[RMDB]
RNA sequence: GGGAACGACUCGAGUAGAGUCGAAAAAGUCAGUGGUCCGACUUACGAGUCGGAGCACUGACAUGGCAGCUGGAUCCAGCCAGGCGGUGUAUCGCCAAACCCAGCCAAUCAAUCUACCCACCGGGAAUACAGAAAGCGAACUUCGGUUCGCUUUCAAUCCAAUUUACCUCUUCGGAGGUAAAUUGGAAAAAGAAACAACAACAACAAC
Reactivity to 2A3 in 0.01 (KOAc 150mM, MgCl2 10mM, bicine 150mM(pH8.5), 24C), signal-to-noise 1, nucleotides 027 to 156: a000g000u010c000a000g000u000g110g280u000c000c010g020a000c000u060u030a050c300g070a010g000u000c000g000g000a010g000c000a000c000u010g000a000c000a000u000g000g000c000a010g000c000u000g000g000a060u110c090c020a010g000c000c010a020g000g000c000g030g000u220g010u140a140u300c030g010c010c000a000a000a040c010c000c000a000g000c000c010a030a080u160c020a030a100u030c050u100a150c060c000c070a030c120c150g050g000g050a050a000u180a170c070a080g010a010a030a000g010c000g010a010a000c000u020u080c110g070g000u000u000c020g000c000u000u000u000c000a000a000